[RMDB]
RNA sequence: GGGAACGACUCGAGUAGAGUCGAAAAGAUAUGGAAGCAAGGGAGCGUCAGGUAUAUCGGAAACGAUAUAUACUCCGACGCGAAGAACUUGCUUCCUAAGUCAAACAAUAUCCUUCGGGAUAUUGAACCACGCAUAUUACUUCGGUAAUAUGCGUGGAAAAGAAACAACAACAACAAC
Reactivity to DMS in 0.01 (KOAc 150mM, MgCl2 10mM, bicine 150mM(pH8.5), 24C), signal-to-noise 1, nucleotides 027 to 126: g000a040u090a300u000g000g000a000a000g000c000a000a010g000g000g000a100g000c000g000u000c000a090g020g020u000a010u000a000u000c000g040g010a100a120a230c000g020a010u020a010u000a010u010a050c100u020c140c020g050a010c000g030c020g000a060a170g000a060a160c020u000u000g000c000u000u010c000c000u000a000a060g020u000c040a130a110a190c000a000a000u000a010u000c000c000u000u010c140g040g010g000a000u010a000u000u000g000a100a290
Reactivity to 2A3 in 0.01 (KOAc 150mM, MgCl2 10mM, bicine 150mM(pH8.5), 24C), signal-to-noise 1, nucleotides 027 to 126: g030a050u010a040u120g000g000a040a000g000c020a000a000g040g000g000a060g030c000g010u000c000a030g050g000u000a000u000a010u020c030g000g000a090a060a020c000g010a010u010a010u010a010u130a300c050u090c190c120g010a020c000g010c000g000a000a090g050a020a000c010u000u000g000c020u000u000c000c000u000a020a000g000u030c020a100a070a040c000a000a010u000a000u010c020c000u000u090c300g180g000g000a000u000a010u010u030g020a060a030
Conditions: 150 mM KOAc, 10 mM MgCl2 and 150 mM bicine (pH 8.5), 24 C. Structure probing data (DMS and 2A3) for a 177-nucleotide construct. The DMS profile rests on 1,507 reads. The data come from the RNA Mapping Database (RMDB), library TTRDEL.